[RMDB]
RNA sequence: GGGAACGACUCGAGUAGAGUCGAAAAAGUAUGCUCCACCAUCUAGAGGCCAUGGAUACCGUGAUUAUGGUCAUUCUCGUCGACAUGAAAGUUAUUCUAGAGGAUAUAGUUAUCAUGAUGGCUACGGUGAGGCCCUUGGUAGAGAUCAUUCUGAACACCCUAAAUGGAGGUUCGCCUCCAUUUAGGGAAAAGAAACAACAACAACAAC
Reactivity to 2A3 in 0.01 (KOAc 150mM, MgCl2 10mM, bicine 150mM(pH8.5), 24C), signal-to-noise 2, nucleotides 027 to 156: a000g070u060a010u000g000c000u000c010c000a020c010c000a050u070c050u150a030g090a230g130g000c030c030a090u110g110g010a100u170a170c000c010g000u020g030a050u010u140a020u060g030g020u000c000a010u050u000c000u010c030g150u020c040g070a030c020a070u180g150a090a100a070g100u100u100a100u210u000c070u090a050g010a040g030g020a000u060a040u050a160g080u140u070a030u040c020a010u010g030a000u020g160g090c030u060a010c000g000g000u030g010a070g010g000c000c000c000u010u000g030g000u010a030g000a010g010a060u200c010a010u100u000c010u040g000a040a020c000a080
The data come from the RNA Mapping Database (RMDB), library OK3TST. Structure probing data (2A3) for a 207-nucleotide construct. The RNA was probed in 150 mM KOAc, 10 mM MgCl2 and 150 mM bicine (pH 8.5) at 24 C. Values cover nucleotides 27 to 156.